This 170-nucleotide RNA was probed chemically with DMS and 2A3. Source: RMDB library 15KLIB, as collected in RNAgym. For 2A3 the reverse transcriptase was SuperScript II with manganese. In probing experiments dimethyl sulfate is read out at A N1 and C N3, which are open when not base-paired.

[RMDB]
RNA sequence: GGGAACGACUCGAGUAGAGUCGAAAAAAAUUACUAAUGAGAGCUACAAUAAUUAUGUACCCUCAUAUGUUAAACCUGAUAGUGUGUCUACCAGCGAUUUAGGUAGUCUCAUUGAUUGUAAUGCGGCGAGGCAAUCCGUUCGCGGAUUGCAAAAGAAACAACAACAACAAC
Reactivity to DMS in 0.01 (KOAc 150mM, MgCl2 10mM, bicine 150mM(pH8.5), 24C), signal-to-noise 3, nucleotides 027 to 129: a020a010a060u020u060a060c030u020a000a000u000g020a080g050a060g020c240u000a020c000a090a090u000a000a000u050u010a080u050g000u050a060c020c020c000u000c020a030u010a070u060g040u000u010a030a040a030c000c000u040g010a000u000a010g060u010g060u070g020u020c000u000a000c040c030a090g030c180g040a100u030u000u030a070g110g030u000a050g030u010c020u000c040a040u000u000g000a130u050u060g010u040a060a030u030g000c110g010g020c030g030a100g020
Reactivity to 2A3 in 0.01 (KOAc 150mM, MgCl2 10mM, bicine 150mM(pH8.5), 24C), signal-to-noise 3, nucleotides 027 to 129: a000a000a000u140u090a000c010u140a060a010u020g000a000g000a000g070c040u000a000c000a090a070u130a190a090u210u110a120u080g040u040a030c000c000c000u030c000a000u060a020u080g080u050u080a000a050a000c010c020u000g030a050u040a090g040u100g010u010g000u030c010u010a060c010c000a030g070c090g090a080u000u030u150a050g000g000u000a030g040u020c010u000c000a030u060u030g070a130u080u030g010u060a040a040u070g020c030g000g000c040g030a030g010

For DMS, 10,467 sequencing reads were counted.